The data come from the RNA Mapping Database (RMDB), library OK1LIB. An RNA of 177 nucleotides, treated with DMS and 2A3 and read out base by base. The 2A3 profile rests on 16,096 reads. The RNA was probed in 150 mM KOAc, 10 mM MgCl2 and 150 mM bicine (pH 8.5) at 24 C.
[RMDB]
RNA sequence: GGGAACGACUCGAGUAGAGUCGAAAAGAAGAGAGUCGACGCAAGCGACGAUAACUGCGGAACGGUAACCGUAGUACCGUACGGUCAUGGCACGCGAAAGCGAAAGAGCGUAACAUGCCAUAAGAGACCAUGAUAUAGCAUUCGUGCUAUAUCAUGGAAAAGAAACAACAACAACAAC
Reactivity to DMS in 0.01 (KOAc 150mM, MgCl2 10mM, bicine 150mM(pH8.5), 24C), signal-to-noise 7, nucleotides 027 to 126: g000a090a070g010a080g000a210g010u010c010g010a100c050g010c140a100a100g010c030g000a030c020g000a090u010a110a060c030u010g010c000g010g020a080a070c110g000g010u020a040a090c020c010g010u030a020g020u000a020c030c010g020u020a050c070g000g000u040c050a020u010g010g000c050a050c040g000c000g020a070a120a150g000c060g010a070a060a080g000a250g000c030g000u010a080a070c040a040u010g010c000c000a050u030a080a080g010a140g000a160
Reactivity to 2A3 in 0.01 (KOAc 150mM, MgCl2 10mM, bicine 150mM(pH8.5), 24C), signal-to-noise 9, nucleotides 027 to 126: g130a060a000g070a000g020a010g020u060c020g020a110c040g020c160a060a080g040c010g050a010c040g010a050u100a100a050c020u040g010c000g020g020a060a030c040g080g060u100a090a050c010c010g040u030a010g030u010a040c000c020g020u070a050c040g020g020u130c020a020u020g010g000c040a010c010g010c000g070a120a060a010g080c050g070a100a090a050g100a020g010c010g000u000a030a020c010a050u040g000c010c010a030u060a100a030g110a000g020a020